[RMDB]
RNA sequence: GGGAACGACUCGAGUAGAGUCGAAAAUAUGGGUUCGCCCAUACAACACCGUAGGUGUUCUACCCACCUCGGGAGGUCGUUGAAAUAACUUUCGAAAGAGAGUUAUGGAGACCGAACGAGAGGAACACCUAAACGGCCAGUGGCAGUUCGCUGCCAAUAUAACCGUUCCAUUCGUGGAACGGUUAUAAAAAGAAACAACAACAACAAC
Reactivity to DMS in 0.01 (KOAc 150mM, MgCl2 10mM, bicine 150mM(pH8.5), 24C), signal-to-noise 2, nucleotides 027 to 156: u010a020u010g000g030g050u000u010c220g010c000c020c000a000u000a000c060a100a150c050a060c000c000g030u000a020g010g010u000g020u020u000c010u000a080c000c000c010a300c120c000u010c000g000g000g010a300g010g010u010c000g000u000u000g030a270a130a010u010a020a010c000u000u000u000c000g000a160a180a140g010a010g010a020g000u000u000a010u020g000g010a260g020a010c000c000g010a300a230c020g000a060g000a170g010g010a030a020c010a000c000c000u010a010a050a050c010g010g010c010c040a080g000u000g060g020c000a070g020u000u000c240g010c010u010g010c010c010a000a180
Reactivity to 2A3 in 0.01 (KOAc 150mM, MgCl2 10mM, bicine 150mM(pH8.5), 24C), signal-to-noise 4, nucleotides 027 to 156: u080a000u010g010g000g030u050u090c200g110c030c010c000a010u010a030c080a110a050c040a030c030c010g020u010a010g000g000u010g020u020u000c020u100a260c000c020c030a020c010c000u000c000g000g020g010a020g010g000u000c010g140u220u030g010a010a020a000u000a000a000c000u010u010u010c010g050a050a070a030g010a010g000a010g000u000u000a000u000g000g000a000g000a000c000c000g000a020a010c000g000a000g000a020g000g000a010a010c000a000c000c000u010a030a060a010c010g010g020c060c070a090g040u100g010g000c000a000g020u080u140c170g050c080u020g010c000c010a020a060
The record gives the reactivity of an RNA of 207 nucleotides to DMS and 2A3. For 2A3 the reverse transcriptase was SuperScript II with manganese. Conditions: 150 mM KOAc, 10 mM MgCl2 and 150 mM bicine (pH 8.5), 24 C. The data come from the RNA Mapping Database (RMDB), library RNAMAK. High DMS reactivity at an A or C suggests that its Watson-Crick edge is free. DMS adducts were read by reverse transcription with MarathonRT.